[RMDB]
RNA sequence: GGGAACGACUCGAGUAGAGUCGAAAAUCAGAGUUUCAAAGGAAUUAACGUUUUUUGGUAAAAUGUGCUAAUGUAAAGAGUGAGAAGAUUAGUGAUACAUAAUGAAAGCAAUGCAUUCUUUCACAUGACUUUGUAAUUCAUUCGUGAAUUACAAAGUAAAAGAAACAACAACAACAAC
Reactivity to 2A3 in 0.01 (KOAc 150mM, MgCl2 10mM, bicine 150mM(pH8.5), 24C), signal-to-noise 9, nucleotides 027 to 126: u110c020a010g030a020g090u030u060u070c080a090a060a030g070g030a080a100u110u060a130a050c070g010u020u010u010u020u080u090g120g030u120a050a050a060a080u050g020u030g040c030u070a050a030u080g050u140a090a070a010g080a040g050u080g030a050g020a150a020g030a070u020u060a040g030u020g060a040u060a150c050a030u160a100a060u160g080a080a010a000g020c040a030a040u090g020c010a030u040u010c000u010u030u030c050a040c020a070u070g020
Reactivity to DMS in 0.01 (KOAc 150mM, MgCl2 10mM, bicine 150mM(pH8.5), 24C), signal-to-noise 9, nucleotides 027 to 126: u010c070a100g010a130g010u000u000u000c030a070a090a100g010g010a090a060u020u010a070a080c100g010u000u000u000u000u010u010g020g010u020a040a030a050a030u010g020u000g010c090u000a040a030u000g010u020a040a050a070g000a060g020u010g000a070g010a080a100g010a040u000u010a060g010u000g010a120u010a090c110a060u010a070a070u020g000a050a040a090g010c130a040a080u030g010c090a050u000u000c020u000u000u000c090a040c120a070u010g000